[RMDB]
RNA sequence: GGGAACGACUCGAGUAGAGUCGAAAAGGUAACUGACGCUGGGAGUUAUAUGUAAACCGACAUGGAGCUGAAGCGCGCACGGCUAUGAAGUGUCGGGAAGAAGUAUGAACUCCUGUGCUGAAGCGCGCACGGCAACCGAAAGGUGCGAAUUGGUUAAGAUAAGAUAAUUCUUCGGAAUUAUCUUAUCAAAAGAAACAACAACAACAAC
Reactivity to 2A3 in 0.01 (KOAc 150mM, MgCl2 10mM, bicine 150mM(pH8.5), 24C), signal-to-noise 5, nucleotides 027 to 156: g110g010u040a060a030c030u030g110a040c030g000c040u060g010g000g000a000g000u010u020a010u000a010u090g020u020a000a010a010c000c000g000a000c000a000u030g010g030a000g000c000u030g030a300a030g010c010g000c010g010c020a010c040g010g000c010u050a190u300g020a030a010g010u000g000u010c000g000g000g000a030a080g010a000a000g000u020a000u080g130a020a010c000u000c000c010u010g010u010g000c010u010g020a140a060g000c010g000c000g000c010a010c010g000g010c030a050a030c020c010g100a110a050a040g040g000u060g010c030g030a110a180u130u180g020g000u090u080a100a090
Reactivity to DMS in 0.01 (KOAc 150mM, MgCl2 10mM, bicine 150mM(pH8.5), 24C), signal-to-noise 3, nucleotides 027 to 156: g060g000u000a040a080c050u000g020a200c100g000c000u020g010g040g010a030g020u000u000a040u000a030u020g000u010a040a140a300c020c010g000a030c000a040u010g010g000a060g020c000u000g000a050a030g020c020g010c000g060c010a300c040g030g010c000u000a200u000g000a100a300g020u000g010u000c000g010g000g000a030a080g010a100a300g000u000a060u000g000a080a020c000u000c000c010u000g020u000g020c000u000g000a100a040g030c040g030c010g010c010a300c040g000g000c010a030a080c010c030g000a100a060a160g000g010u010g020c070g000a070a150u010u000g010g010u000u000a080a250
This 207-nucleotide RNA was probed chemically with 2A3 and DMS. It was measured as part of the RMDB library RNAMAK. Conditions: 150 mM KOAc, 10 mM MgCl2 and 150 mM bicine (pH 8.5), 24 C. For 2A3, 6,825 sequencing reads were counted. DMS adducts were read by reverse transcription with MarathonRT.